Background
An RNA of 207 nucleotides, treated with 2A3 and read out base by base. The RNA was probed in 150 mM KOAc, 10 mM MgCl2 and 150 mM bicine (pH 8.5) at 24 C. It was measured as part of the RMDB library M2RFPK. As a SHAPE reagent, 2A3 marks flexible, mostly unpaired nucleotides at the ribose 2'-OH.
RNA sequence: GGGAACGACUCGAGUAGAGUCGAAAAGCCGCGGCAAGUGGAGUUAGCGAGAAGAGACUAGGCUUUGGUUUCUUCAAGUGAAGCGGUCACCAAUCAGGUGUGGUAGAUACCGUAAAAAAUCCGGAUUAAUGCCUCAGCGCGUUCGCGCGCUGAGGAAGACUACCUAGCAGUUCGCUGCUAGGUAGUCAAAAGAAACAACAACAACAAC
Reactivity to 2A3 in 0.01 (KOAc 150mM, MgCl2 10mM, bicine 150mM(pH8.5), 24C), signal-to-noise 1, nucleotides 027 to 156: g020c000c020g010c050g090g080c110a200a190g050u100g040g050a100g020u180u140a060g020c010g010a010g000a070a000g040a000g010a010c000u020a060g120g110c030u170u140u240g040g030u010u020u000c000u000u010c000a020a000g010u020g110a020a030g010c000g030g020u050c030a020c010c000a020a160u130c080a000g000g050u050g020u020g120g020u010a000g010a130u070a050c010c010g000u010a130a160a040a000a080a000u080c040c000g120g010a050u030u230a160a070u260g060c010c000u000c000a010g000c000g000c010g090u140u080c170g020c000g040c010g040c070u030g000a000g000g000a000a000